[RMDB]
RNA sequence: GGGAACGACUCGAGUAGAGUCGAAAAGAUAUGGACGAGGUGGCGGGACUAUGAAGACGAUCGGAAACGAUCGUUGGAGUCUACCACUCGUCCUAAGUCAAAAGUGGCAGGGUUCGCCCUGCCACAACUCUUGCGUACAGUUCGCUGUACGCAAGAGAAAAGAAACAACAACAACAAC
Reactivity to DMS in 0.01 (KOAc 150mM, MgCl2 10mM, bicine 150mM(pH8.5), 24C), signal-to-noise 1, nucleotides 027 to 126: g010a020u000a300u000g010g010a030c000g010a060g010g050u000g000g000c090g000g040g030a010c020u000a260u010g010a190a220g000a000c000g000a030u000c000g030g020a140a090a160c020g000a000u000c000g020u000u020g000g000a010g010u000c000u000a190c030c000a020c000u010c010g000u000c000c000u000a000a070g000u010c060a020a200a080a160g000u000g020g010c020a020g000g000g000u010u010c300g010c000c000c000u000g010c010c000a020c010a000a080
Reactivity to 2A3 in 0.01 (KOAc 150mM, MgCl2 10mM, bicine 150mM(pH8.5), 24C), signal-to-noise 2, nucleotides 027 to 126: g000a030u060a000u140g000g020a010c010g010a050g180g260u130g000g150c300g200g060g000a010c000u040a260u300g000a050a000g030a020c000g020a020u010c000g000g000a060a070a000c000g030a000u020c000g000u030u000g020g010a010g000u000c020u060a050c000c010a020c000u000c010g000u000c000c000u030a030a000g060u020c020a030a050a000a150g000u000g020g000c020a020g000g100g000u080u170c260g240c000c000c000u000g000c000c020a000c000a000a000
An RNA of 177 nucleotides, treated with DMS and 2A3 and read out base by base. The 2A3 profile rests on 2,275 reads. The reactions ran in a buffer of 150 mM KOAc, 10 mM MgCl2 and 150 mM bicine (pH 8.5), at 24 C. DMS adducts were read by reverse transcription with MarathonRT.